RNA sequence: GGGAACGACUCGAGUAGAGUCGAAAACGCAGCUUGGCGAAGAGGGGCGUUUGCUGGCGAUCGAUCGCGACCCGCAGGCUAUCGCCGUUGCGAAGACUAUUGAUGAUCCGCGCUUCUCCAUCAUCCAAUAAAUAAUUAGGUUCGCCUAAUUAUUUAUAAAAGAAACAACAACAACAAC
Reactivity to 2A3 in 0.01 (KOAc 150mM, MgCl2 10mM, bicine 150mM(pH8.5), 24C), signal-to-noise 4, nucleotides 027 to 126: c030g000c020a020g020c040u120u260g050g010c020g010a080a020g050a060g080g060g020g000c030g020u070u060u100g020c030u020g030g010c010g030a050u060c040g050a060u100c050g040c020g100a120c000c040c000g000c020a030g060g010c010u080a110u140c020g010c010c010g050u110u040g000c020g010a040a010g030a060c050u050a060u170u160g050a050u030g010a040u020c030c020g020c010g020c000u040u020c010u040c030c000a060u050c010a040u020c040c020a090
Reactivity to DMS in 0.01 (KOAc 150mM, MgCl2 10mM, bicine 150mM(pH8.5), 24C), signal-to-noise 7, nucleotides 027 to 126: c060g010c030a060g010c050u010u010g020g020c060g010a060a120g000a090g010g010g000g020c100g020u000u000u000g020c040u000g010g010c040g000a060u010c080g000a100u010c110g010c030g010a090c070c040c040g020c050a100g000g010c050u000a070u010c050g010c010c060g000u010u000g010c020g010a080a080g010a120c070u010a090u000u000g000a090u000g000a070u000c030c060g010c050g010c040u000u000c020u000c010c050a080u010c050a070u010c030c080a090
Structure probing data (2A3 and DMS) for a 177-nucleotide construct. 2A3 is a SHAPE reagent: it acylates the 2'-hydroxyl of flexible nucleotides of all four kinds. It was measured as part of the RMDB library OK2TST. For DMS the reverse transcriptase was MarathonRT. In probing experiments dimethyl sulfate is read out at A N1 and C N3, which are open when not base-paired. The reactions ran in a buffer of 150 mM KOAc, 10 mM MgCl2 and 150 mM bicine (pH 8.5), at 24 C. Values cover nucleotides 27 to 126.